The record gives the reactivity of an RNA of 207 nucleotides to 2A3 and DMS. Source: RMDB library OK3TST, as collected in RNAgym. Reactivities are rounded to 0.1 and cut off at 0 and 3.
RNA sequence: GGGAACGACUCGAGUAGAGUCGAAAAGAUCUUGACACACGCUUCAUUAGUCUUGACUAAAUGCGAAUCUAUACCUCAUUUCAAAGAAAUCUGAAUUCUUUAGGUUCCAGGACCAGUUUAUUGUUAUACAUAAUCACGAUCAUUUAUUGAGCUCCACGUUCUUACAACCAUUCGUGGUUGUAAGAACAAAAGAAACAACAACAACAAC
Reactivity to 2A3 in 0.01 (KOAc 150mM, MgCl2 10mM, bicine 150mM(pH8.5), 24C), signal-to-noise 4, nucleotides 027 to 156: g030a060u020c020u030u060g030a010c000a010c010a000c120g060c060u110u080c070a120u050u090a020g010u010c000u040u070g050a060c030u100a030a090a070u070g020c040g020a030a030u010c030u040a060u080a110c020c030u060c060a100u070u110u070c070a110a050a040g090a040a120a020u050c070u120g060a100a100u140u030c030u020u090u030a040g000g020u040u000c030c000a010g000g070a020c030c000a010g030u050u020u090a090u090u090g050u050u110a090u030a140c050a050u150a080a060u070c030a030c130g030a030u040c010a020u040u080u190a100u040u100g030a000g040c030u010c030c020a040c060
Reactivity to DMS in 0.01 (KOAc 150mM, MgCl2 10mM, bicine 150mM(pH8.5), 24C), signal-to-noise 1, nucleotides 027 to 156: g020a070u000c080u000u000g000a140c040a140c120a160c070g020c060u010u010c090a150u000u000a100g020u000c030u000u040g020a130c030u020a040a080a110u000g000c050g010a060a080u000c060u000a040u000a150c050c030u000c010a070u030u000u000c070a090a060a100g030a040a060a100u000c060u030g020a090a170u000u020c090u010u000u000a160g020g000u020u000c030c000a070g000g000a090c010c010a100g020u010u000u000a030u020u000g020u000u000a150u010a080c050a080u010a080a080u000c050a090c040g000a050u000c020a070u000u010u010a120u040u000g010a090g020c030u000c030c030a100c290